[RMDB]
RNA sequence: GGGAACGACUCGAGUAGAGUCGAAAAGGGGGCGUAAAGGUUUCGACGUGGGUUUGGAACUUGAGGCUGCAUGUCGUGUUACUCUGGGUCACGUAAAAACUGGGGAACUUUAAAAUAAACGCAGACGAUAAUUUCGCGAUAGCAGCCUAGUUGCUGCGGGCAUAAAUGAGUUCGCUCAUUUAUGCCCAAAAGAAACAACAACAACAAC
Reactivity to 2A3 in 0.01 (KOAc 150mM, MgCl2 10mM, bicine 150mM(pH8.5), 24C), signal-to-noise 2, nucleotides 027 to 156: g000g000g010g010g000c000g010u060a000a060a020g100g010u040u070u080c030g030a010c040g040u050g020g060g040u030u020u100g030g000a080a000c000u040u060g040a020g000g010c030u080g000c040a150u160g010u100c010g000u010g000u040u040a030c020u000c000u010g010g020g040u040c010a020c060g000u080a000a030a050a090a090c060u080g000g000g000g050a000a040c010u030u090u110a020a100a010a040u150a030a100a000c030g000c050a030g030a030c060g010a060u040a180a120u090u270u160c030g020c000g000a030u040a050g000c000a010g020c030c000u020a030g000u030u140g000c010u000g000c000